[RMDB]
RNA sequence: GGGAACGACUCGAGUAGAGUCGAAAAAGCUAGUCUCCUGACUAGUCAGAGCUGAUCCUCUAGAGAGGACUUCCUUCCUAGUCCUGACUUCGAUCAGGAGAUCUCUCUCUCAGCUUCGAUCUCCUAGCUCUGAGAGAAGAGAGGAAGAGCUGAAGUCGUCAUAAGAAGUUUUCGAACUUCUUAUGACAAAAGAAACAACAACAACAAC
Reactivity to 2A3 in 0.01 (KOAc 150mM, MgCl2 10mM, bicine 150mM(pH8.5), 24C), signal-to-noise 6, nucleotides 027 to 156: a000g020c020u030a020g030u030c010u030c040c060u070g000a000c010u010a010g010u020c020a010g020a020g060c050u050g040a200u060c030c020u030c070u190a140g120a030g000a010g180g020a040c010u120u110c020c040u050u090c010c030u080a050g070u060c000c000u010g000a000c010u100u080c120g210a290u010c080a000g000g000a010g010a010u010c010u000c000u000c000u000c000u000c000a080g030c030u140u070c080g170a170u050c070u090c120c030u020a030g020c010u020c030u070g020a020g010a000g020a150a040g020a000g000a000g020g060a050a080g040a010g040c030u040g020a040a020g080u140c070
Reactivity to DMS in 0.01 (KOAc 150mM, MgCl2 10mM, bicine 150mM(pH8.5), 24C), signal-to-noise 2, nucleotides 027 to 156: a060g000c020u000a090g000u010c010u010c080c080u000g030a040c020u000a010g010u000c020a040g010a070g020c020u000g020a080u000c020c010u000c010u030a170g000a220g030a060g030g000a090c040u000u000c020c030u000u000c070c040u000a110g000u000c000c000u000g010a030c010u000u000c190g010a110u000c000a020g000g010a020g010a030u000c050u000c010u000c000u000c010u000c020a060g030c030u010u000c030g000a170u010c180u000c040c010u010a040g020c000u000c040u010g000a050g000a070g000a010a080g010a120g000a060g020g000a070a070g000a110g010c030u000g000a080a150g020u010c120

Chemical mapping of a 207-nucleotide RNA with 2A3 and DMS. The reactions ran in a buffer of 150 mM KOAc, 10 mM MgCl2 and 150 mM bicine (pH 8.5), at 24 C. The data come from the RNA Mapping Database (RMDB), library OK3TST. The DMS profile rests on 5,457 reads. The 2A3 profile rests on 4,047 reads.